[RMDB]
RNA sequence: GGGAACGACUCGAGUAGAGUCGAAAAGAAGAUUUCUGCAACGAAUGAAUACUGCGGAUACUUUAUUCAAAAACCGUGAACUAAAGGAACAACUAGAGGAAGAAUUUGUACGGCAAGAACAUUGAAACGGCUAAAUAGUGUUCGCACUAUUUAGCCGAAAAGAAACAACAACAACAAC
Reactivity to DMS in 0.01 (KOAc 150mM, MgCl2 10mM, bicine 150mM(pH8.5), 24C), signal-to-noise 2, nucleotides 027 to 126: g030a080a120g000a210u000u010u010c040u000g040c040a090a110c130g020a000a040u000g030a080a140u010a080c050u020g000c030g000g000a120u000a070c030u000u010u010a040u030u010c060a040a060a050a090a070c140c090g000u000g000a050a080c170u000a010a070a040g000g010a160a080c110a060a090c060u000a040g020a100g030g010a060a050g000a080a080u000u010u000g020u000a020c230g010g020c030a040a030g000a070a110c170a110u000u010g000a040a040a160
Reactivity to 2A3 in 0.01 (KOAc 150mM, MgCl2 10mM, bicine 150mM(pH8.5), 24C), signal-to-noise 1, nucleotides 027 to 126: g070a040a000g070a110u070u080u010c040u010g000c000a000a000c060g130a090a090u270g090a190a040u050a090c000u060g050c000g000g030a020u040a030c000u060u020u030a060u020u080c040a080a050a030a070a130c040c040g030u030g000a010a010c020u050a130a020a030g080g030a040a000c020a020a000c060u040a050g020a030g080g000a020a010g050a040a080u080u020u150g000u020a040c020g020g000c010a010a020g020a110a050c000a030u050u160g000a000a160a030
Record summary: The record gives the reactivity of an RNA of 177 nucleotides to DMS and 2A3. The reactions ran in a buffer of 150 mM KOAc, 10 mM MgCl2 and 150 mM bicine (pH 8.5), at 24 C. Values cover nucleotides 27 to 126.